This 207-nucleotide RNA was probed chemically with DMS and 2A3. For 2A3, 443 sequencing reads were counted. Reactivities are rounded to 0.1 and cut off at 0 and 3. Reactivities are given for positions 27 through 156.
[RMDB]
RNA sequence: GGGAACGACUCGAGUAGAGUCGAAAAUGAGCUCCACAGGGCCAGAAGGUUUUUGUACAUGAUACCUGAGGCUUCAUGUCACCUCCACUACGUGCCUGGUAUUCAUGACGGUGUGGUCCCCUCCUGCCCCAGCAUGGAAGACAGAGCCUCUGUGAGAUCCUAGCACAAUGUUCGCAUUGUGCUAGGAAAAAGAAACAACAACAACAAC
Reactivity to DMS in 0.01 (KOAc 150mM, MgCl2 10mM, bicine 150mM(pH8.5), 24C), signal-to-noise 1, nucleotides 027 to 156: u010g040a100g010c000u010c040c010a090c020a020g030g020g020c030c000a100g030a060a060g010g030u010u000u000u000u010g060u000a050c050a070u010g050a080u000a020c000c010u010g060a150g040g020c010u000u000c040a020u000g000u010c110a060c020c020u000c000c040a070c060u000a030c050g070u010g010c000c060u010g000g040u000a030u000u000c040a110u010g030a090c070g030g050u000g010u000g040g000u000c010c000c020c020u030c030c010u000g010c040c020c010c040a150g040c010a100u000g050g010a130a130g020a090c010a200g010a150g010c040c020u000c050u020g030u000g010a130g000a190
Reactivity to 2A3 in 0.01 (KOAc 150mM, MgCl2 10mM, bicine 150mM(pH8.5), 24C), signal-to-noise 1, nucleotides 027 to 156: u090g000a010g030c000u000c000c000a060c090a140g050g000g070c030c000a010g050a030a110g150g050u010u090u120u260u210g050u110a050c010a100u050g000a040u040a020c000c090u080g040a000g070g000c000u120u010c060a090u000g040u050c000a000c070c060u070c010c000a040c100u110a040c030g040u120g050c040c000u090g030g150u050a110u040u110c030a050u120g040a060c000g050g050u080g020u040g040g080u020c000c000c000c000u050c000c000u030g040c010c000c000c010a000g100c000a080u090g000g020a000a120g000a000c000a000g040a000g000c000c040u090c070u140g080u030g000a020g000a000
The reactions ran in a buffer of 150 mM KOAc, 10 mM MgCl2 and 150 mM bicine (pH 8.5), at 24 C. For 2A3 the reverse transcriptase was SuperScript II with manganese.